[RMDB]
An RNA of 177 nucleotides, treated with DMS and 2A3 and read out base by base. The data come from the RNA Mapping Database (RMDB), library OK2TRN.
RNA sequence: GGGAACGACUCGAGUAGAGUCGAAAACAGUCAAGGUGAAGGCGGGCCAGACCAUCGCCGCAUUCUACCAGAGCACCGUCAUGAUCUUUGGCACGAUGGCUCGCUACAUUCUCAGAGUUAGGGAAAAAGUGCACUCCAUAUUCGUAUGGAGUGCACUAAAAGAAACAACAACAACAAC
Reactivity to DMS in 0.01 (KOAc 150mM, MgCl2 10mM, bicine 150mM(pH8.5), 24C), signal-to-noise 2, nucleotides 027 to 126: c110a120g000u000c080a080a050g010g020u000g010a080a050g000g070c020g000g000g000c050c060a110g000a120c120c050a120u000c070g010c030c040g020c070a060u010u000c090u020a090c060c030a090g000a060g010c080a070c010c050g000u000c080a050u020g020a060u000c050u000u000u020g000g000c050a010c120g030a100u020g000g000c030u000c060g000c000u010a040c120a100u000u000c010u000c030a140g000a060g020u000u000a070g000g010g020a060a040a070a060
Reactivity to 2A3 in 0.01 (KOAc 150mM, MgCl2 10mM, bicine 150mM(pH8.5), 24C), signal-to-noise 2, nucleotides 027 to 126: c000a020g100u130c090a000a140g020g000u090g080a090a040g040g010c000g000g030g020c000c020a040g030a080c060c040a090u090c150g060c010c000g060c030a010u080u090c030u050a100c000c020a020g000a000g060c050a020c070c010g080u100c030a170u090g140a120u040c050u050u100u060g020g040c030a010c140g020a040u070g050g040c000u010c010g000c000u040a050c020a120u090u040c000u000c000a000g010a010g090u070u130a120g060g020g030a010a070a030a080